Structure probing data (2A3) for a 177-nucleotide construct.
The 2A3 profile rests on 430 reads.
Values cover nucleotides 27 to 126.
It was measured as part of the RMDB library OK1LIB.
RNA sequence: GGGAACGACUCGAGUAGAGUCGAAAAUGUAGUGAAGAGAUUGUACAACCCAUCACUUUCUAACUUUGCGUUAGCAUUGUGCAGUGGUGUAAUGUGGUUGUACACUUAUAGCAUUGGAGAAGCCUCACGUGCAGCUACCGUUCGCGGUAGCUGCACGAAAAGAAACAACAACAACAAC
Reactivity to 2A3 in 0.01 (KOAc 150mM, MgCl2 10mM, bicine 150mM(pH8.5), 24C), signal-to-noise 1, nucleotides 027 to 126: u070g090u060a100g030u000g100a070a110g020a070g000a100u020u040g000u000a000c000a000a000c000c000c000a000u000c000a010c000u140u300u110c000u000a000a060c000u000u020u000g000c000g250u070u270a020g000c000a010u000u000g020u060g000c030a030g060u010g000g000u040g000u060a190a090u080g090u260g040g010u000u000g060u000a000c000a000c000u000u000a000u090a030g050c070a130u100u060g060g000a070g010a000a020g070c010c040u150c080a040